[RMDB]
RNA sequence: GGGAACGACUCGAGUAGAGUCGAAAAUGAAGGUUAUGUCCAAGAUGGGUAUUUCAACUUUGCAAUCAUAUAAAGGUGCCCAGAUUUUUGAGGCUCUUGGCAUUGACAACGAGGUCAUCAACAAAUGUUUCCUUGGUACCGCAUCCCGUAUCCGUGACUCCGUUUUACUGUUCGCAGUAAAACGGAGAAAAGAAACAACAACAACAAC
Reactivity to DMS in 0.01 (KOAc 150mM, MgCl2 10mM, bicine 150mM(pH8.5), 24C), signal-to-noise 1, nucleotides 027 to 156: u000g000a100a090g000g040u000u000a080u010g000u020c000c010a060a110g010a140u020g030g020g010u000a080u000u000u000c060a060a030c050u000u000u000g020c100a160a150u000c100a100u010a150u010a030a060a090g010g020u010g050c000c010c000a060g020a120u000u000u000u020u010g020a100g030g010c030u000c030u010u030g010g060c060a160u030u000g000a070c050a130a110c090g000a020g010g050u000c070a090u020c040a090a150c080a050a070a070u010g030u000u020u010c050c020u000u000g010g000u000a020c080c040g040c030a080u000c000c060c010g000u000a050u000c000c000g040u020g000a220
Reactivity to 2A3 in 0.01 (KOAc 150mM, MgCl2 10mM, bicine 150mM(pH8.5), 24C), signal-to-noise 2, nucleotides 027 to 156: u110g010a100a010g040g020u100u080a010u070g070u040c050c040a060a030g090a090u070g030g000g000u080a060u020u170u090c050a120a130c070u070u100u110g080c110a170a290u120c080a080u180a010u170a180a130a040g030g000u020g000c010c000c000a040g030a050u110u160u050u040u080g130a060g020g020c010u000c000u080u000g000g000c030a060u020u250g050a090c040a080a020c070g000a020g000g040u030c020a070u050c010a110a090c060a110a200a080u040g010u000u050u060c010c000u020u000g000g050u020a030c000c030g040c060a040u030c010c000c050g020u070a080u090c060c020g070u060g060a040
The record gives the reactivity of an RNA of 207 nucleotides to DMS and 2A3. For 2A3 the reverse transcriptase was SuperScript II with manganese. For 2A3, 1,236 sequencing reads were counted. The DMS profile rests on 2,040 reads. DMS (dimethyl sulfate) methylates the pairing face of unpaired adenines and cytosines. Values are in units of 0.01, from 0 to 300, in steps of 10.